RNA sequence: GGGAACGACUCGAGUAGAGUCGAAAAGGAACUAGAUAUUUCACUUACAAAGAACUUGCACUCUGAUGAUAGCCGAAGUGGAGAUUCCUAAAGAGUUAUUAGCUAUGCACUCGUAAGAACCGGCAUGUGAACACACACUUUUCGAAGUGUGUGUUCAAAAAGAAACAACAACAACAAC
Reactivity to 2A3 in 0.01 (KOAc 150mM, MgCl2 10mM, bicine 150mM(pH8.5), 24C), signal-to-noise 4, nucleotides 027 to 126: g070g000a030a020c030u040a060g050a130u080a200u100u070u080c090a050c040u040u120a090c040a050a200a030g030a080a050c000u040u080g020c020a030c020u040c020u080g110a150u080g010a090u090a030g010c070c040g080a070a000g030u040g030g020a040g010a100u050u000c000c000u100a090a070a000g080a030g040u060u040a100u120u080a060g030c020u020a030u160g000c050a020c020u010c020g060u080a060a010g000a060a050c030c000g070g000c040a020u100g080
Reactivity to DMS in 0.01 (KOAc 150mM, MgCl2 10mM, bicine 150mM(pH8.5), 24C), signal-to-noise 4, nucleotides 027 to 126: g030g010a040a080c080u000a120g010a110u000a060u010u020u010c040a090c030u020u000a080c120a060a070a090g010a080a080c090u030u000g000c050a040c100u010c020u010g000a120u020g010a080u010a030g070c040c030g010a070a040g040u020g000g020a070g010a150u010u000c020c010u020a080a110a120g000a020g000u000u010a090u010u010a050g010c060u000a070u030g000c050a070c050u020c070g000u010a090a090g000a050a090c100c030g000g000c050a080u020g020
The record gives the reactivity of an RNA of 177 nucleotides to 2A3 and DMS. It was measured as part of the RMDB library OK1LIB. Reactivities are given for positions 27 through 126. The RNA was probed in 150 mM KOAc, 10 mM MgCl2 and 150 mM bicine (pH 8.5) at 24 C. For DMS the reverse transcriptase was MarathonRT.